Background:
Chemical mapping of a 177-nucleotide RNA with 2A3 and DMS.
[RMDB]
RNA sequence: GGGAACGACUCGAGUAGAGUCGAAAAGAUGAGGUUAAGAACUAGAGAGAACUUGAGACGCGUGAUGAAGCUCAAGAGAAAACGCGAGACUGAGCAAGUGUGCUAGACGAAGCACACAAGAGGAAGACGGAUCAUUUACGUUCGCGUAAAUGAUCCGAAAAGAAACAACAACAACAAC
Reactivity to 2A3 in 0.01 (KOAc 150mM, MgCl2 10mM, bicine 150mM(pH8.5), 24C), signal-to-noise 2, nucleotides 027 to 126: g030a040u140g000a000g010g040u150u200a160a000g060a040a040c050u090a050g000a000g020a000g030a130a000c000u010u060g000a020g000a050c070g040c070g140u130g020a190u110g040a030a000g010c000u000c000a000a000g050a000g000a030a090a000a030c010g000c000g000a020g050a050c100u070g000a000g020c000a110a140g000u000g010u000g000c020u000a030g000a050c120g130a170a000g000c020a000c000a000c050a030a020g010a020g130g050a030a000g060a030
Reactivity to DMS in 0.01 (KOAc 150mM, MgCl2 10mM, bicine 150mM(pH8.5), 24C), signal-to-noise 2, nucleotides 027 to 126: g020a100u010g000a100g000g010u000u010a110a070g010a100a090c080u000a080g000a080g000a130g010a060a110c080u010u030g000a010g000a030c090g000c060g060u000g010a060u010g010a020a060g000c030u000c000a020a070g000a080g020a070a030a080a060c060g000c070g030a100g000a010c100u000g000a050g000c040a060a160g000u000g000u000g000c020u000a020g010a170c300g030a040a070g060c000a010c020a000c000a020a130g010a040g000g000a100a060g000a110
2A3 adducts were read by reverse transcription with SuperScript II with manganese.